[RMDB]
RNA sequence: GGGAACGACUCGAGUAGAGUCGAAAAAGUUGCUCAGUAUACGUACUGAGCAGCAAGGGGUUGAAGCGGACACCCCUUCAGGCGCGCGCCCAAGCUCCGUACGCCGCCUCAUACGUGAGGCGGCGAAAUAGGUGUAUCUGGUUCGCCAGAUACACAAGGUUAAAGCUUUGUUCGCAAAGCUUUAACCAAAAGAAACAACAACAACAAC
Reactivity to 2A3 in 0.01 (KOAc 150mM, MgCl2 10mM, bicine 150mM(pH8.5), 24C), signal-to-noise 1, nucleotides 027 to 156: a000g030u020u000g000c010u000c000a000g010u000a030u000a090c220g000u000a020c030u020g010a000g000c000a000g000c000a000a010g040g000g000g010u030u090g190a160a020g010c010g020g000a000c000a000c000c000c000c000u030u090c080a020g010g000c030g020c070g100c030g010c090c020c070a000a000g020c080u000c000c000g040u010a040c000g000c000c000g070c030c000u020c000a050u070a160c300g080u050g000a010g000g000c000g020g010c010g010a000a000a000u070a020g120g000u000g000u000a000u000c000u000g040g000u040u040c040g020c010c000a000g000a000u000a000c000a020c000a000a060